An RNA of 207 nucleotides, treated with 2A3 and read out base by base. 2A3 adducts were read by reverse transcription with SuperScript II with manganese. Reactivities are rounded to 0.1 and cut off at 0 and 3. It was measured as part of the RMDB library RSTRND.

RNA sequence: GGGAACGACUCGAGUAGAGUCGAAAAGGUCACUUUACAGAACGUUAAACAAUAGGUGACUCGCCUGCCAUCAGCCCGCCAGCUGGCGGUUGUCAGGUUAAAUUAAAGAGCAUGGCUAAGUAUGUAGAACUGUCUGUAGAGGACUUGCGGACGCGGGCAAACGCUGCAAGUUCGCUUGCAGCGUUUGAAAAGAAACAACAACAACAAC
Reactivity to 2A3 in 0.01 (KOAc 150mM, MgCl2 10mM, bicine 150mM(pH8.5), 24C), signal-to-noise 1, nucleotides 027 to 156: g040g000u040c020a040c190u020u020u100a040c090a140g030a190a080c050g090u100u260a150a170a080c050a090a060u110a090g000g050u020g020a050c000u020c010g020c010c000u000g000c020c000a110u080c000a010g070c020c030c070g060c060c000a130g030c160u090g120g000c000g020g000u020u060g020u030c000a000g000g000u000u030a050a090a000u140u140a000a020a000g020a000g010c100a050u060g100g000c090u010a070a040g080u080a100u170g040u060a040g090a050a020c010u070g000u060c000u000g010u020a000g000a050g030g040a050c070u020u050g000c020g000g000a020c010g000c020g110g050g020